[RMDB]
RNA sequence: GGGAACGACUCGAGUAGAGUCGAAAAAAUGAGCAUGAGGUUAUUUUGGGUUGUUAGGUGUUACAAACACACUAAUGUGUUUUUGUCUAUUAGAGCAGCAUGGCCCAGUUGCCAAUGGAAGAACUCAACUCCUAUCCUAAUUCGUUAGGAUAGGAGUAAAAGAAACAACAACAACAAC
Reactivity to 2A3 in 0.01 (KOAc 150mM, MgCl2 10mM, bicine 150mM(pH8.5), 24C), signal-to-noise 3, nucleotides 027 to 126: a000a040u090g000a030g010c030a050u030g030a030g090g050u050u110a070u050u150u100u130g060g010g010u030u070g050u040u050a050g000g040u030g000u050u040a030c000a000a020a000c000a000c010a010c060u150a170a200u150g000u010g000u020u000u000u040u100g020u000c020u030a100u120u100a100g010a020g060c000a010g010c000a020u080g050g000c000c020c050a010g000u030u040g040c000c050a040a010u060g050g000a100a050g020a110a010c020u000c030a020
Reactivity to DMS in 0.01 (KOAc 150mM, MgCl2 10mM, bicine 150mM(pH8.5), 24C), signal-to-noise 7, nucleotides 027 to 126: a060a060u010g010a050g010c040a080u000g010a130g020g000u000u000a070u010u000u010u000g010g000g010u000u010g010u000u000a070g020g010u000g010u000u010a110c140a040a030a030c040a020c000a120c120u000a090a070u010g010u000g010u000u010u000u000u000g010u000c080u010a090u010u000a110g010a090g010c020a020g010c040a050u010g010g010c020c010c020a090g000u000u000g010c020c020a050a050u000g000g000a080a070g010a060a090c070u000c100a090
Chemical mapping of a 177-nucleotide RNA with 2A3 and DMS. Conditions: 150 mM KOAc, 10 mM MgCl2 and 150 mM bicine (pH 8.5), 24 C. The 2A3 profile rests on 2,809 reads.